[RMDB]
RNA sequence: GGGAACGACUCGAGUAGAGUCGAAAAGAAAGGCAGCCAAUGCAGCCCACGCAGCCAGUCGAUGCAUGCUUUUGCAUGCCGCCCACGACUGAGGGCAGCUGCGGCACUGAGGGCAGCUGCCGAAAGACACUAUAAAUUAGUUCGCUAAUUUAUAGUGAAAAGAAACAACAACAACAAC
Reactivity to DMS in 0.01 (KOAc 150mM, MgCl2 10mM, bicine 150mM(pH8.5), 24C), signal-to-noise 9, nucleotides 027 to 126: g000a110a120a160g010g010c010a010g010c010c070a100a140u020g010c110a080g010c070c040c060a190c040g000c010a020g010c020c010a020g010u000c030g010a150u000g000c000a010u000g010c000u000u000u010u010g020c000a010u000g000c010c220g000c060c040c090a270c040g000a040c040u000g000a130g010g010g030c130a150g000c010u000g000c010g010g000c280a070c110u000g000a060g010g000g010c150a130g000c000u000g000c000c000g000a020a060a090g000a220
Reactivity to 2A3 in 0.01 (KOAc 150mM, MgCl2 10mM, bicine 150mM(pH8.5), 24C), signal-to-noise 9, nucleotides 027 to 126: g090a050a080a010g010g010c010a010g000c030c050a100a060u230g050c040a050g020c020c010c000a010c010g010c000a000g020c020c010a010g030u040c040g040a050u200g000c000a000u010g000c010u170u280u270u300g000c010a000u010g000c010c020g030c000c020c000a080c030g110a030c060u080g030a140g060g120g000c000a010g000c000u010g000c000g020g000c040a030c090u100g040a170g000g010g000c000a000g000c000u000g000c000c000g000a000a000a000g020a010
An RNA of 177 nucleotides, treated with DMS and 2A3 and read out base by base. Reactivities are given for positions 27 through 126. The data come from the RNA Mapping Database (RMDB), library OK2TRN. Conditions: 150 mM KOAc, 10 mM MgCl2 and 150 mM bicine (pH 8.5), 24 C. For DMS the reverse transcriptase was MarathonRT.